[RMDB]
An RNA of 177 nucleotides, treated with 2A3 and DMS and read out base by base.
For DMS, 3,658 sequencing reads were counted.
For 2A3, 995 sequencing reads were counted.
2A3 adducts were read by reverse transcription with SuperScript II with manganese.
Values cover nucleotides 27 to 126.
RNA sequence: GGGAACGACUCGAGUAGAGUCGAAAAUGCUGGUUAGGGAUUGUAGAGAUGCAGUCCCCAGUGUCGCAAAUUAGAUUGUAUACGGGCUUCUCUGGUUACGUGCGACAGAUACUGGUGAGGCGAAGAAGGGUUUAAAUAACUUCGGUUAUUUAAACCCAAAAGAAACAACAACAACAAC
Reactivity to 2A3 in 0.01 (KOAc 150mM, MgCl2 10mM, bicine 150mM(pH8.5), 24C), signal-to-noise 2, nucleotides 027 to 126: u090g040c000u050g070g070u140u190a090g010g010g010a000u000u000g020u080a030g000a020g000a120u020g030c000a000g020u000c000c000c000c000a010g040u020g030u060c010g000c030a000a070a070u110u070a130g060a130u140u260g060u070a080u050a060c060g030g120g010c030u170u090c030u000c030u000g020g000u020u100a020c000g070u050g060c010g000a000c000a010g030a010u070a040c030u010g020g000u000g000a010g010g080c040g000a040a000g080a070a040
Reactivity to DMS in 0.01 (KOAc 150mM, MgCl2 10mM, bicine 150mM(pH8.5), 24C), signal-to-noise 2, nucleotides 027 to 126: u030g020c000u010g020g040u010u030a180g000g030g000a010u020u000g000u000a010g000a190g000a140u000g000c000a010g000u010c000c000c000c000a030g000u000g020u010c010g010c010a090a090a100u030u010a050g010a090u000u000g010u000a100u030a130c120g020g000g000c090u030u000c090u030c030u000g000g020u000u000a070c090g010u020g020c010g000a010c020a100g000a120u040a030c020u020g000g000u000g000a090g000g000c020g000a060a100g010a140a130